[RMDB]
An RNA of 177 nucleotides, treated with DMS and read out base by base.
The data come from the RNA Mapping Database (RMDB), library OK2TRN.
RNA sequence: GGGAACGACUCGAGUAGAGUCGAAAACUAGUUUUCUAAUAAUCGUGGGCUUAAGGACCGUCAAGAUUUUUGUGCCCCCUUUUAGAUACUGAGGCAGGCCAACCAGAUUGUUAAAGAAUGUCAAUAGUGUAACUGUCUGAUUCGUCAGACAGUUACAAAAAGAAACAACAACAACAAC
Reactivity to DMS in 0.01 (KOAc 150mM, MgCl2 10mM, bicine 150mM(pH8.5), 24C), signal-to-noise 2, nucleotides 027 to 126: c040u000a060g000u000u010u010u000c040u000a040a020u000a030a040u000c030g030u010g000g010g000c080u010u010a050a070g010g000a060c000c010g010u010c160a080a180g010a080u000u000u010u000u010g020u010g010c000c010c030c040c040u010u010u010u000a010g020a090u010a020c080u000g020a080g010g020c070a070g000g020c040c040a050a080c080c040a110g010a060u000u000g010u000u000a040a030a070g000a070a070u000g010u000c100a060a120u000a110g000